Overview:
Chemical mapping of a 177-nucleotide RNA with 2A3 and DMS. 2A3 adducts were read by reverse transcription with SuperScript II with manganese. The DMS profile rests on 118,767 reads.

RNA sequence: GGGAACGACUCGAGUAGAGUCGAAAAGGAUGCUACGUAGUUAUAUUGACAGCUACCUCUUGUGGAGUAACACAUUGUCAAUCGUAAUGCGAUUGUUACUCCAGAUCGCGUUACGACAUCUAUAUCGCUACUACAGUCUAUUCGUAGAUUGUAGUAGAAAAGAAACAACAACAACAAC
Reactivity to 2A3 in 0.01 (KOAc 150mM, MgCl2 10mM, bicine 150mM(pH8.5), 24C), signal-to-noise 9, nucleotides 027 to 126: g050g010a040u070g020c050u060a070c100g060u050a020g030u150u070a170u040a060u220u110g050a030c030a030g010c030u060a090c020c010u060c030u090u110g070u100g060g030a040g030u080a080a020c020a010c030a160u070u150g060u080c040a040a060u030c030g020u020a020a020u020g000c000g000a010u010u040g040u040u040a090c020u010c020c000a000g000a010u010c000g000c000g010u010u010a010c010g010a010c010a030u020c040u040a100u030a030u210c060g010
Reactivity to DMS in 0.01 (KOAc 150mM, MgCl2 10mM, bicine 150mM(pH8.5), 24C), signal-to-noise 9, nucleotides 027 to 126: g010g010a060u000g010c090u000a080c140g010u000a050g010u000u000a090u010a120u010u000g000a050c070a050g010c090u000a100c060c040u000c060u000u000g020u000g010g000a070g010u000a040a050c050a070c190a080u000u000g010u000c060a040a060u000c080g010u000a030a020u000g010c000g010a020u000u000g000u000u000a150c040u000c030c050a250g000a010u000c020g010c020g010u000u000a020c010g010a090c170a040u000c050u000a080u000a090u010c130g010